An RNA of 177 nucleotides, treated with DMS and 2A3 and read out base by base. The reactions ran in a buffer of 150 mM KOAc, 10 mM MgCl2 and 150 mM bicine (pH 8.5), at 24 C. DMS adducts were read by reverse transcription with MarathonRT. For 2A3 the reverse transcriptase was SuperScript II with manganese. Source: RMDB library OK1LIB, as collected in RNAgym.

RNA sequence: GGGAACGACUCGAGUAGAGUCGAAAAGAGCUGGAAACUGCUUUGACGCAAUGUAUCUCUCAUUUGCGUUAAGAUAGAAUAACGUCUAUUUUAAGAGAUUGCAGUUUUUGCAGGAAAAUAGCUCAAAGGGUAUUGUUAUGUUCGCAUAACAAUACCCAAAAGAAACAACAACAACAAC
Reactivity to DMS in 0.01 (KOAc 150mM, MgCl2 10mM, bicine 150mM(pH8.5), 24C), signal-to-noise 2, nucleotides 027 to 126: g000a020g000c000u000g000g040a180a090a080c000u000g010c000u000u000u010g000a010c000g000c000a060a040u000g000u070a060u040c000u000c050u000c120a050u000u010u020g030c010g020u020u000a010a090g010a140u030a070g000a110a180u000a040a070c100g030u010c030u010a010u000u010u010u020a060a040g000a040g020a060u000u010g000c010a050g000u000u000u000u000u000g040c030a040g000g000a010a030a100a300u040a040g010c000u000c000a060a120a060
Reactivity to 2A3 in 0.01 (KOAc 150mM, MgCl2 10mM, bicine 150mM(pH8.5), 24C), signal-to-noise 6, nucleotides 027 to 126: g000a010g000c010u020g040g050a050a120a050c000u000g000c010u010u020u000g020a010c010g010c030a020a050u130g120u190a140u070c010u000c000u020c060a090u040u020u080g030c020g000u010u000a050a040g040a080u200a070g190a160a140u100a060a010c020g040u040c080u080a080u060u120u050u120a050a010g000a000g010a010u000u050g010c050a080g020u010u010u010u030u000g000c010a020g020g000a150a130a030a020u050a010g000c000u000c010a050a060a010